[RMDB]
RNA sequence: GGGAACGACUCGAGUAGAGUCGAAAACGUCAACCGACAUUUGACCCCGUCAUGUGGGAGUUGUAUUGUUUUUUCGAAGGGAUGGGGACGACUUCGCGCUUGGGGGUCUCUUAUAUGAUGGGAAACCGUCUAAUGAGUUGUUCGCAGCUCGUUAGACAAAAGAAACAACAACAACAAC
Reactivity to DMS in 0.01 (KOAc 150mM, MgCl2 10mM, bicine 150mM(pH8.5), 24C), signal-to-noise 9, nucleotides 027 to 126: c120g000u010c040a070a090c130c080g010a100c090a080u010u010u020g000a070c020c000c000c010g010u030c030a010u010g010u010g000g000g000a100g010u010u000g000u010a150u020u010g000u000u010u000u010u010u010c090g010a100a080g000g000g000a060u010g010g000g000g010a060c050g000a030c050u010u000c050g010c070g010c050u000u020g010g000g010g000g000u000c030u010c050u020u020a060u030a040u020g010a040u000g010g000g000a110a070a120c150c110
Reactivity to 2A3 in 0.01 (KOAc 150mM, MgCl2 10mM, bicine 150mM(pH8.5), 24C), signal-to-noise 9, nucleotides 027 to 126: c050g040u040c030a060a060c070c040g130a060c070a090u070u060u110g030a030c000c000c000c020g070u100c030a030u040g010u020g020g010g010a020g020u020u030g060u050a140u070u120g210u070u060u030u010u040u090c070g060a070a040g060g010g020a030u070g010g010g030g000a000c010g010a010c000u070u060c050g020c010g010c200u050u070g020g000g000g000g010u000c000u000c000u010u040a060u010a030u100g060a030u040g010g000g050a050a040a050c040c030
Description
Structure probing data (DMS and 2A3) for a 177-nucleotide construct. For DMS, 37,451 sequencing reads were counted. The RNA was probed in 150 mM KOAc, 10 mM MgCl2 and 150 mM bicine (pH 8.5) at 24 C.